[RMDB]
RNA sequence: GGGAACGACUCGAGUAGAGUCGAAAAGUUAAUAUUGAUAUGGAGCUCCUACCCACCGAGCAUGGACCUAAGACAGUCGGAAACGAUCGAGGUCCCUGCUCGAGGGAGCUCCUAAGUCUGCGAGUAACUGCUAAAUGAGGUUCGCCUCAUUUAGCAGAAAAGAAACAACAACAACAAC
Reactivity to DMS in 0.01 (KOAc 150mM, MgCl2 10mM, bicine 150mM(pH8.5), 24C), signal-to-noise 3, nucleotides 027 to 126: g000u000u000a030a140u010a160u000u010g000a060u000a300u010g000g000a020g010c030u000c000c000u000a120c060c000c010a300c110c020g010a010g020c000a030u010g030g000a010c000c000u000a280a080g010a060c300a100g000u010c000g000g000a070a090a190c000g000a030u000c060g000a020g000g000u000c000c020c050u000g000c010u000c000g010a060g000g000g000a010g010c000u000c000c000u000a000a110g020u000c000u000g000c120g020a150g000u000a040a110